[RMDB]
RNA sequence: GGGAACGACUCGAGUAGAGUCGAAAAGUAAAGGCGAGUGAGAAGAUCACAGAAUGCCAAAAGCACGCUUAGAAACGGACAUCUCUGAGCAAAAGUGCACGCAAUAAGCCAAAGAUGCCGAAAAAAAGAUCUCAAUAAGUUUCGACUUAUUGAGAUCAAAAGAAACAACAACAACAAC
Reactivity to DMS in 0.01 (KOAc 150mM, MgCl2 10mM, bicine 150mM(pH8.5), 24C), signal-to-noise 4, nucleotides 027 to 126: g000u000a080a100a100g010g020c010g020a130g030u000g020a030g010a140a080g000a130u000c010a000c010a120g010a130a090u000g020c020c010a080a070a110a110g010c020a050c030g010c020u000u000a050g010a050a100a130c060g000g000a080c040a030u000c040u000c020u010g000a080g010c000a030a050a080a180g000u000g010c070a060c150g020c080a040a020u010a070a140g010c020c030a040a050a060g000a020u000g000c010c010g000a010a000a040a060a090a060a130
Reactivity to 2A3 in 0.01 (KOAc 150mM, MgCl2 10mM, bicine 150mM(pH8.5), 24C), signal-to-noise 2, nucleotides 027 to 126: g040u060a030a080a040g010g020c030g030a040g000u040g020a040g020a170a090g060a070u010c000a000c000a030g150a090a040u130g010c000c000a050a040a000a000g000c010a010c030g000c000u040u030a040g050a040a100a030c020g000g080a040c000a030u010c020u000c000u030g050a060g020c000a030a050a080a080g050u030g030c050a010c050g000c000a010a200u130a190a010g020c020c000a080a070a000g010a000u020g020c010c000g070a060a030a000a000a010a000a020

About this RNA
Source: RMDB library M2PK90, as collected in RNAgym. Chemical mapping of a 177-nucleotide RNA with DMS and 2A3. For 2A3, 6,798 sequencing reads were counted. For 2A3 the reverse transcriptase was SuperScript II with manganese. DMS (dimethyl sulfate) methylates the pairing face of unpaired adenines and cytosines.